Structure probing data (DMS and 2A3) for a 177-nucleotide construct. 2A3 adducts were read by reverse transcription with SuperScript II with manganese. The reactions ran in a buffer of 150 mM KOAc, 10 mM MgCl2 and 150 mM bicine (pH 8.5), at 24 C. The 2A3 profile rests on 941 reads. Values cover nucleotides 27 to 126.
RNA sequence: GGGAACGACUCGAGUAGAGUCGAAAAAUCAGCUUCGAAUUGGAGUGAUAGGCAGGCUGAACGCUUAGUAGUAAGAGUGCUCACCGCGAUCGUGCUCGGUGGAGUCACGUACCGCAGUCAGUUCACAACUACGGCCAUCGUUCGCGAUGGCCGUAGUAAAAGAAACAACAACAACAAC
Reactivity to DMS in 0.01 (KOAc 150mM, MgCl2 10mM, bicine 150mM(pH8.5), 24C), signal-to-noise 1, nucleotides 027 to 126: a040u020c060a120g030c010u000u000c050g020a110a170u000u010g010g020a000g000u000g020a080u020a080g010g000c100a040g010g000c050u020g050a070a150c050g000c040u000u000a090g000u000a100g000u000a050a100g000a190g000u000g010c000u000c070a070c000c030g060c050g020a040u010c110g000u000g000c030u010c050g000g050u020g030g000a050g000u000c030a000c060g000u000a040c070c050g050c030a040g000u000c090a050g020u000u010c030a050c180a060
Reactivity to 2A3 in 0.01 (KOAc 150mM, MgCl2 10mM, bicine 150mM(pH8.5), 24C), signal-to-noise 1, nucleotides 027 to 126: a010u100c040a020g060c020u060u030c060g110a200a240u160u060g030g000a000g040u030g100a050u010a050g060g000c020a000g040g030c000u060g030a040a000c020g000c040u120u090a010g020u010a020g010u020a300a000g070a020g070u000g000c000u030c010a010c000c000g000c000g020a060u130c030g040u040g040c020u000c020g100g070u170g200g100a020g060u180c010a020c020g040u010a050c000c050g000c010a010g000u000c020a030g020u040u060c030a030c010a140